[RMDB]
RNA sequence: GGGAACGACUCGAGUAGAGUCGAAAAGACUGGUACCCACUGUCAGGUAGGCCCCAUAACAGUGCAGGGUUGCCUGGAAGGAAGCGGUAGGUUUGGUAAAGGACAGGGCCGUUGAGCUUUUAGAAGAACUACCACCGUAUUUCGAUACGGUGGUAGUAAAAGAAACAACAACAACAAC
Reactivity to DMS in 0.01 (KOAc 150mM, MgCl2 10mM, bicine 150mM(pH8.5), 24C), signal-to-noise 5, nucleotides 027 to 126: g000a040c040u010g000g000u010a060c020c000c010a160c030u010g000u000c040a010g010g010u010a060g010g010c030c000c020c030a100u020a130a120c270a080g000u020g020c190a170g020g010g010u000u000g020c060c000u000g000g010a050a060g000g000a090a080g010c090g010g020u010a050g000g000u000u000u000g010g020u020a060a060a070g000g010a060c070a070g000g010g010c030c060g010u020u010g000a090g010c030u000u000u000u010a100g010a110a080g030a110
Reactivity to 2A3 in 0.01 (KOAc 150mM, MgCl2 10mM, bicine 150mM(pH8.5), 24C), signal-to-noise 3, nucleotides 027 to 126: g020a020c070u110g050g070u090a030c020c000c000a020c050u030g020u060c010a010g010g050u170a120g110g000c000c000c000c000a060u170a250a050c050a110g130u080g170c080a050g000g010g000u030u060g000c000c000u020g010g040a000a040g050g010a080a000g030c040g110g000u060a020g010g050u020u030u090g000g000u060a000a060a070g030g000a030c040a040g000g100g000c030c000g010u020u030g010a000g040c000u020u010u080u110a050g070a140a000g000a060